[RMDB]
RNA sequence: GGGAACGACUCGAGUAGAGUCGAAAAGCUAAAGUUAAUGCCUACAAUAUCAGUGAGGUGCGUGGGUGGACUCACGGGCUGAUGCGUAUGUCCAGACUUUACUAACACAGUCUCUAAGUUGUACUUAAAUGACAUUUUUCUUUCAGAAUAUGUACAAGGUACUUUUAUACUUCGGUAUAAAAGUACCAAAAGAAACAACAACAACAAC
Reactivity to DMS in 0.01 (KOAc 150mM, MgCl2 10mM, bicine 150mM(pH8.5), 24C), signal-to-noise 1, nucleotides 027 to 156: g030c020u000a040a020a020g020u000u000a060a050u000g010c030c030u000a080c060a110a220u020a100u000c040a060g020u000g020a100g010g000u000g040c020g000u000g020g020g040u000g000g020a080c070u010c020a070c070g040g030g040c010u000g020a070u010g020c100g030u010a070u020g020u000c070c020a230g000a050c050u010u000u000a130c040u010a050a080c040a040c020a070g030u000c010u000c030u000a050a240g000u000u000g000u000a080c070u000u000a040a080a150u010g010a080c040a100u000u000u000u020u000c040u000u000u000c080a060g030a060a130u010a100u010g000u000a090c090a090a100
Reactivity to 2A3 in 0.01 (KOAc 150mM, MgCl2 10mM, bicine 150mM(pH8.5), 24C), signal-to-noise 3, nucleotides 027 to 156: g040c040u060a070a000a020g030u080u100a100a020u090g020c000c000u030a020c040a070a060u070a050u220c030a040g020u010g130a090g060g030u100g050c030g010u050g030g000g020u120g070g050a080c030u010c030a000c000g010g050g000c000u040g000a040u060g020c030g020u050a030u090g020u020c050c020a020g020a000c000u020u050u020a030c030u060a090a000c070a010c010a130g060u010c030u000c030u140a120a100g020u010u000g030u050a070c030u060u080a090a150a120u110g020a010c000a030u170u080u000u010u040c030u030u270u070c030a020g000a050a020u070a040u110g020u040a090c010a030a050